[RMDB]
RNA sequence: GGGAACGACUCGAGUAGAGUCGAAAAUUGUCAUUGGCGUUAAACACAAUGCGUGUGCGAUCGGGUUGCACCGCAGCAUUGCAACCCAAGCUGAUGGUUAACAACAUUAAGGGUAAUCCUUUAAUAAGCAUUAUCCGGUAUUCGUACCGGAUAAUGCAAAAGAAACAACAACAACAAC
Reactivity to DMS in 0.01 (KOAc 150mM, MgCl2 10mM, bicine 150mM(pH8.5), 24C), signal-to-noise 2, nucleotides 027 to 126: u020u010g000u000c010a020u000u000g000g000c050g020u010u000a080a150a050c040a030c040a080a160u000g040c170g010u010g020u010g010c020g000a060u000c210g000g010g010u010u000g000c030a030c080c090g000c130a080g010c150a090u010u000g010c040a000a020c030c000c000a080a080g010c070u000g010a040u000g000g000u000u010a040a050c140a110a070c130a100u000u000a010a070g020g010g000u000a050a200u000c010c000u000u000u000a020a040u000a110a150
Reactivity to 2A3 in 0.01 (KOAc 150mM, MgCl2 10mM, bicine 150mM(pH8.5), 24C), signal-to-noise 2, nucleotides 027 to 126: u040u010g020u010c000a010u000u050g020g000c060g060u060u130a070a170a000c010a000c010a130a200u250g100c120g080u080g000u000g000c040g030a030u050c020g010g050g000u020u040g000c000a010c000c070g140c060a010g060c030a080u000u090g000c010a000a020c000c000c030a000a000g030c010u020g010a010u020g040g060u050u110a090a040c060a020a000c010a040u050u060a020a020g020g040g020u130a200a120u190c010c000u000u060u040a090a110u100a060a050
The record gives the reactivity of an RNA of 177 nucleotides to DMS and 2A3.
Conditions: 150 mM KOAc, 10 mM MgCl2 and 150 mM bicine (pH 8.5), 24 C.
2A3 adducts were read by reverse transcription with SuperScript II with manganese.
The 2A3 profile rests on 1,442 reads.